[RMDB]
Chemical mapping of a 177-nucleotide RNA with DMS and 2A3. For 2A3 the reverse transcriptase was SuperScript II with manganese. Conditions: 150 mM KOAc, 10 mM MgCl2 and 150 mM bicine (pH 8.5), 24 C. The data come from the RNA Mapping Database (RMDB), library TTRDES. DMS adducts were read by reverse transcription with MarathonRT.
RNA sequence: GGGAACGACUCGAGUAGAGUCGAAAAAAAGAUAUGGAGCGAUGACUUCGCUUGGAUUUAUAGGCGGACUAUGUCGGAAACGACAUAGUUUUGCCUAUUGUCAGCGAAGCAUCGCUCCUAAGUCAAACAACAUAGUACACUUCGGUGUACUAUGUUGAAAAGAAACAACAACAACAAC
Reactivity to DMS in 0.01 (KOAc 150mM, MgCl2 10mM, bicine 150mM(pH8.5), 24C), signal-to-noise 5, nucleotides 027 to 126: a090a090a090g010a040u010a300u010g010g000a000g020c000g010a010u000g000a190c000u000u000c000g020c000u000u010g020g010a020u000u000u000a000u000a010g010g020c000g000g000a010c000u000a000u000g010u000c000g000g000a130a090a250c010g010a010c000a000u000a000g000u000u000u000u020g050c000c000u000a000u000u000g000u000c010a040g000c010g010a010a010g000c000a000u000c000g000c000u000c000c000u000a000a070g000u000c020a120a120a280
Reactivity to 2A3 in 0.01 (KOAc 150mM, MgCl2 10mM, bicine 150mM(pH8.5), 24C), signal-to-noise 4, nucleotides 027 to 126: a000a000a000g060a020u090a040u150g000g000a020g000c030g020a000u010g150a300c010u000u000c010g010c030u070u130g110g010a010u080u300u080a020u020a000g010g000c020g010g000a000c020u000a000u000g000u010c000g030g030a070a090a040c010g000a000c010a000u000a000g010u000u000u020u080g010c000c000u000a000u000u000g000u010c010a000g010c000g000a000a010g000c000a000u000c000g000c000u000c000c000u000a000a000g000u010c000a000a070a090